The record gives the reactivity of an RNA of 177 nucleotides to DMS and 2A3. Source: RMDB library OK2TST, as collected in RNAgym. The DMS profile rests on 3,922 reads. For 2A3 the reverse transcriptase was SuperScript II with manganese.

RNA sequence: GGGAACGACUCGAGUAGAGUCGAAAAGGAACAACGACUUAUCGAUCUAGAAGAAUAUCAUUUUCUCAAUCAUACGUUAAUUCAUGGCAUCGAUGAACAAGACAAUGGAAGGUUUUUUUCCAAAGAAACUACCAGUGAUUUUCGAAUCACUGGUAGUAAAAGAAACAACAACAACAAC
Reactivity to DMS in 0.01 (KOAc 150mM, MgCl2 10mM, bicine 150mM(pH8.5), 24C), signal-to-noise 4, nucleotides 027 to 126: g010g010a040a040c060a070a060c080g020a120c160u000u010a050u000c030g010a050u000c030u010a110g010a110a060g000a050a060u000a070u050c120a130u010u000u000u000c060u000c050a130a080u000c080a070u000a070c130g000u000u010a060a080u000u000c050a060u000g010g000c120a050u000c050g010a040u010g010a050a080c170a040a070g020a060c110a070a120u010g000g010a020a080g010g020u000u000u000u000u000u000u000c020c030a040a090a130g000a060a060
Reactivity to 2A3 in 0.01 (KOAc 150mM, MgCl2 10mM, bicine 150mM(pH8.5), 24C), signal-to-noise 4, nucleotides 027 to 126: g020g000a060a000c000a020a020c060g060a020c050u060u070a020u080c050g030a020u050c040u090a040g040a120a010g030a110a080u120a060u210c110a110u050u040u100u020c040u000c020a090a110u050c020a050u070a100c040g030u050u090a070a020u100u030c030a030u060g040g000c010a020u040c030g040a020u030g020a030a030c030a080a020g070a030c030a070a060u090g040g040a040a080g040g090u020u010u000u000u040u040u090c030c000a060a080a000g060a050a140